[RMDB]
RNA sequence: GGGAACGACUCGAGUAGAGUCGAAAAGAUAUGGAUCACAUCUACAAAUUCUAUCACUCGGAAACGAGUGAAUAGUUAUUGUAGAGUGUGAUCCUAAGUCAAAGUGUUAAAGUUCGCUUUAACACAACUUUAUUCAAGGCUUCGGCCUUGAAUAAAGAAAAGAAACAACAACAACAAC
Reactivity to DMS in 0.01 (KOAc 150mM, MgCl2 10mM, bicine 150mM(pH8.5), 24C), signal-to-noise 3, nucleotides 027 to 126: g000a040u000a300u020g020g000a030u000c000a000c010a050u000c000u000a000c000a000a060a300u000u000c000u000a000u000c000a000c000u000c000g000g050a150a150a170c000g010a010g000u000g000a040a000u000a010g020u000u000a100u000u020g000u000a000g010a030g020u000g040u000g000a000u020c000c020u000a000a090g020u000c030a120a110a090g000u000g010u000u000a000a000a000g020u000u000c300g030c000u000u000u010a000a000c000a000c030a140a100
Reactivity to 2A3 in 0.01 (KOAc 150mM, MgCl2 10mM, bicine 150mM(pH8.5), 24C), signal-to-noise 1, nucleotides 027 to 126: g020a010u080a030u250g000g000a010u000c010a000c000a000u000c000u000a030c020a090a190a110u120u030c000u000a000u010c000a000c020u000c010g070g000a110a060a020c030g000a010g020u000g000a000a000u000a000g010u020u060a300u190u150g000u010a010g020a040g030u010g010u010g000a000u010c000c000u030a020a010g030u040c070a110a100a080g010u000g000u000u000a030a000a000g020u050u170c300g000c070u000u000u000a000a000c010a010c020a020a020
This 177-nucleotide RNA was probed chemically with DMS and 2A3.
The RNA was probed in 150 mM KOAc, 10 mM MgCl2 and 150 mM bicine (pH 8.5) at 24 C.